[RMDB]
RNA sequence: GGGAACGACUCGAGUAGAGUCGAAAAGAAGGCAGGCAUUCUACCACUACCCUGCAUUCCUGUGCAUAUCCUACUUUUUUGAGGCAGGGUCUCAUUAAGUUACCCAAGUUGAUCUCAACUCAUGAUCCGUUCAUAUUAGAUUCGUCUAAUAUGAACGAAAAGAAACAACAACAACAAC
Reactivity to DMS in 0.01 (KOAc 150mM, MgCl2 10mM, bicine 150mM(pH8.5), 24C), signal-to-noise 9, nucleotides 027 to 126: g010a080a070g010g020c030a020g000g010c160a110u000u010c060u000a120c080c050a070c090u000a120c200c010c010u000g010c030a120u000u000c030c030u000g010u010g010c100a070u010a080u000c030c030u000a040c040u000u000u000u000u010u000g010a040g010g000c050a120g010g010g010u000c030u000c020a030u000u000a030a050g000u000u000a130c030c020c020a090a090g010u000u000g000a060u000c040u000c090a060a060c090u000c130a060u000g000a060u010c070
Reactivity to 2A3 in 0.01 (KOAc 150mM, MgCl2 10mM, bicine 150mM(pH8.5), 24C), signal-to-noise 9, nucleotides 027 to 126: g060a020a030g080g000c020a000g020g010c030a070u130u030c040u100a100c010c040a040c040u060a060c010c000c000u000g000c010a020u040u050c010c020u060g040u090g070c030a040u050a080u170c020c020u040a080c040u090u140u080u040u060u150g030a020g040g000c070a080g160g020g100u000c010u000c010a030u050u050a050a010g020u030u070a080c010c000c020a030a030g020u030u040g060a080u010c050u010c060a060a080c030u050c100a090u130g030a040u030c020